This 207-nucleotide RNA was probed chemically with DMS and 2A3. 2A3 adducts were read by reverse transcription with SuperScript II with manganese. Reactivities are given for positions 27 through 156.

RNA sequence: GGGAACGACUCGAGUAGAGUCGAAAAAUGUUCAACCGUGUUGGUUGCGGCCAUUCCUUGAUAGAGCAAGAUGAGCGCGGCACGCAAGUAAUUUUCUGGUGUGAUCUGUUUCACGCAAACAAGCCUGUGAACUUCCGUUAUCAGAUCUUCCACCUGGUCGACUCACAUAAUUCGUUAUGUGAGUCGAAAAAGAAACAACAACAACAAC
Reactivity to DMS in 0.01 (KOAc 150mM, MgCl2 10mM, bicine 150mM(pH8.5), 24C), signal-to-noise 1, nucleotides 027 to 156: a080u000g040u010u020c050a070a090c060c020g030u010g010u000u000g000g000u010u000g040c010g000g000c050c020a180u010u000c060c030u010u000g050a160u010a040g010a160g000c110a060a130g010a120u050g030a120g060c040g020c010g080g000c100a060c040g000c020a030a100g000u030a050a080u010u000u000u000c040u030g020g000u100g050u000g010a070u000c010u000g000u000u000u000c030a060c000g030c010a080a060a100c040a050a170g010c020c040u010g000u000g050a050a050c080u010u010c000c010g020u000u020a150u000c040a020g010a030u000c060u010u020c070c140a070c000c020u010g030g020
Reactivity to 2A3 in 0.01 (KOAc 150mM, MgCl2 10mM, bicine 150mM(pH8.5), 24C), signal-to-noise 2, nucleotides 027 to 156: a010u110g020u080u020c020a030a010c020c000g020u020g080u110u090g070g030u030u020g020c040g020g010c000c010a060u110u080c030c000u040u030g050a130u060a180g140a020g120c070a050a010g040a130u070g010a020g020c200g010c060g100g000c030a040c140g010c040a030a070g030u170a060a120u080u120u060u020c080u060g000g000u000g000u020g030a010u020c010u010g020u010u030u000c030a000c030g000c000a060a090a120c020a120a020g120c010c080u160g040u050g060a080a040c000u070u000c080c000g020u020u000a040u070c010a000g010a030u010c000u050u000c070c010a010c020c020u030g100g040